[RMDB]
RNA sequence: GGGAACGACUCGAGUAGAGUCGAAAACGUAACACAGUGAGUGGACGGAACAAAUCCCCUUCCCACCUCCCCACUGUCCACUCACUGUCUUCCUAAGAGGAAAUAUAAAUCGGGGGUGGGAAGGGGACCAUUUACGUAAUUUCGAUUACGUAAAUGGAAAAGAAACAACAACAACAAC
Reactivity to 2A3 in 0.01 (KOAc 150mM, MgCl2 10mM, bicine 150mM(pH8.5), 24C), signal-to-noise 9, nucleotides 027 to 126: c060g080u090a090a020c040a000c000a110g000u000g000a000g000u000g000g010a000c020g020g040a060a020c040a060a080a090u090c000c000c000c000u000u000c000c000c000a000c000c000u030c040c060c030c030a070c030u030g000u000c000c000a000c010u010c000a000c000u000g000u000c000u010u010c000c000u040a080a030g070a070g190g200a040a130a010u300a050u100a040a130a050u220c080g000g000g000g000g000u000g000g000g000a000a000g000g000g000g000a000
Reactivity to DMS in 0.01 (KOAc 150mM, MgCl2 10mM, bicine 150mM(pH8.5), 24C), signal-to-noise 3, nucleotides 027 to 126: c300g000u020a090a140c210a160c010a010g010u000g010a000g000u000g000g000a010c000g000g000a050a070c300a050a090a110u030c000c000c000c000u000u010c000c000c000a000c010c000u000c010c020c170c070a130c090u020g000u000c000c000a010c000u000c020a000c020u000g000u000c110u020u000c010c030u000a050a060g010a050g000g020a080a090a090u020a070u040a050a110a140u020c230g020g020g010g000g020u000g030g000g000a000a000g000g000g000g000a040

Conditions: 150 mM KOAc, 10 mM MgCl2 and 150 mM bicine (pH 8.5), 24 C. This 177-nucleotide RNA was probed chemically with 2A3 and DMS. The 2A3 profile rests on 53,637 reads. For DMS, 6,165 sequencing reads were counted. High 2A3 reactivity points to a flexible backbone, as in loops and unpaired stretches.